[RMDB]
RNA sequence: GGGAACGACUCGAGUAGAGUCGAAAAGAUAGGCAAUUCGUUGCCUAUCAAAAAACCUUUGUGGAUCUCCGCUAGCAUCGAUCUAGUAUGCCCAUUGGGCAUGCUAGGGAGCUAUGAGAUCCACUCUGGUAAAAAUCAUUAUAUUCGUAUAAUGAAACAGUAUGUAUUGCUUCGGCAAUACAUACUGAAAAGAAACAACAACAACAAC
Reactivity to DMS in 0.01 (KOAc 150mM, MgCl2 10mM, bicine 150mM(pH8.5), 24C), signal-to-noise 1, nucleotides 027 to 156: g030a010u000a000g010g010c000a050a050u000u010c280g020u000u000g000c000c000u000a000u020c000a000a000a060a060a110a080c000c000u000u010u000g040u000g000g000a010u010c000u000c020c050g020c060u000a020g010c000a300u000c160g000a040u010c020u010a000g000u010a010u000g000c000c020c010a300u010u000g110g030g020c000a010u000g000c000u000a020g000g000g000a030g000c000u000a020u000g000a060g000a010u000c000c000a000c000u000c000u000g000g000u000a010a080a080a170a150u000c000a000u010u000a010u000a040u000u000c190g030u000a020u000a010a010u000g000a100a160a290
Reactivity to 2A3 in 0.01 (KOAc 150mM, MgCl2 10mM, bicine 150mM(pH8.5), 24C), signal-to-noise 2, nucleotides 027 to 156: g010a000u010a010g000g000c010a010a020u050u100c230g070u110u020g000c000c000u000a020u000c000a000a000a000a000a000a010c010c010u010u010u000g000u000g000g010a000u010c000u000c010c010g000c030u000a000g000c020a140u300c040g070a030u030c020u000a000g000u000a000u000g000c000c010c070a300u230u300g000g010g000c000a000u000g000c000u000a000g010g000g000a010g000c000u010a020u130g000a000g010a000u000c000c000a000c000u000c000u000g000g020u070a090a060a030a030a060u030c000a000u020u020a010u010a010u010u100c090g000u070a010u030a020a010u070g000a130a040a060

The record gives the reactivity of an RNA of 207 nucleotides to DMS and 2A3. The 2A3 profile rests on 3,173 reads. The reactions ran in a buffer of 150 mM KOAc, 10 mM MgCl2 and 150 mM bicine (pH 8.5), at 24 C. The DMS profile rests on 3,491 reads. Reactivities are rounded to 0.1 and cut off at 0 and 3.